[RMDB]
RNA sequence: GGGAACGACUCGAGUAGAGUCGAAAACACACAAGGUUCGCCUUGUGUGCAAGAAUAGACGAAUAGUACCGUAGAAGUAUUCAGGUCACAUAACUACGGAAAUGGCGUUCUGCUUCGGCAGAACGAACGGAAUGACAAUGUUCGCAUUGUCAUUCCGAAAAGAAACAACAACAACAAC
Reactivity to 2A3 in 0.01 (KOAc 150mM, MgCl2 10mM, bicine 150mM(pH8.5), 24C), signal-to-noise 4, nucleotides 027 to 126: c010a000c000a000c000a000a010g030g000u050u070c160g120c040c000u000u000g000u010g000u000g010c010a020a050g060a070a110u130a110g120a060c070g080a090a040u080a150g080u060a100c000c010g000u010a000g010a200a030g040u040a070u090u140c100a070g040g150u100c040a020c010a140u160a100a060c020u010a000c010g000g030a020a030a090u160g140g000c010g010u010u000c010u000g020c000u010u040c180g090g000c000a000g010a000a000c000g000a010a010
Reactivity to DMS in 0.01 (KOAc 150mM, MgCl2 10mM, bicine 150mM(pH8.5), 24C), signal-to-noise 3, nucleotides 027 to 126: c010a000c000a000c010a030a000g000g010u000u000c300g020c000c000u000u000g010u000g000u010g000c040a100a070g010a140a060u010a030g010a140c060g010a110a100u010a110g010u010a070c000c010g000u000a000g000a120a150g010u000a050u000u000c080a100g020g010u010c070a070c090a070u000a090a120c010u000a030c010g010g000a080a030a120u000g010g000c000g010u000u000c000u000g010c000u000u000c240g020g000c000a000g000a020a000c000g000a010a110